The record gives the reactivity of an RNA of 177 nucleotides to DMS. DMS adducts were read by reverse transcription with MarathonRT.
RNA sequence: GGGAACGACUCGAGUAGAGUCGAAAACGUGGAUGAAAUUAUCACUACCACGGCCCAUAGUGAUAAUUUCAUUGGGCAGCCUUAGGUACGGUGGACAUGCGAAAGCAUGUCCAUCGUACUUAAGGCAGCAGCAAGAAGGGUUCGCCCUUCUUGCUGCAAAAGAAACAACAACAACAAC
Reactivity to DMS in 0.01 (KOAc 150mM, MgCl2 10mM, bicine 150mM(pH8.5), 24C), signal-to-noise 1, nucleotides 027 to 126: c080g020u010g000g010a020u010g000a000a000a010u000u000a010u000c000a000c000u000a040c160c040a190c130g020g010c020c010c050a300u000a010g010u010g000a010u000a010a010u000u000u000c000a030u000u000g020g000g000c090a120g000c000c000u000u000a010g000g010u000a000c000g020g010u010g010g000a000c000a000u010g010c000g000a170a110a220g020c000a000u000g000u000c000c000a000u000c010g010u000a000c000u000u000a000a000g000g020c000a000